[RMDB]
RNA sequence: GGGAACGACUCGAGUAGAGUCGAAAAGAAAGAAAGAAAGAAAUCUGACAGAAUGACGGAUUCGAUCGUUGUGGCCGGCGGGCCACCACGUCAUUCCUUCGCACUGUCUCCGGGCAGACCGCCAUAAAAAAGCGGAUCUACUUCGGUAGAUCCGCAAGUUUUCAAGUUCGUUCGCGAACUUGAAAACAAAAGAAACAACAACAACAAC
Reactivity to 2A3 in 0.01 (KOAc 150mM, MgCl2 10mM, bicine 150mM(pH8.5), 24C), signal-to-noise 1, nucleotides 027 to 156: g010a040a040a030g050a060a100a010g040a130a070a010g040a030a160a080u130c140u100g010a000c000a020g130a200a100u090g010a000c020g020g000a030u080u070c130g020a050u300c040g000u000u010g010u000g020g010c000c040g060g140c190g040g060g000c000c030a010c000c000a000c000g030u030c000a000u010u010c000c000u010u020c030g000c000a030c010u000g010u000c000u000c100c000g030g020g000c010a020g010a100c040c100g040c060c000a060u260a040a110a010a010a010a000g000c000g000g000a000u000c000u000a000c000u020u080c060g040g000u000a000g010a000u000c000c020g010c000a010a000

An RNA of 207 nucleotides, treated with 2A3 and read out base by base.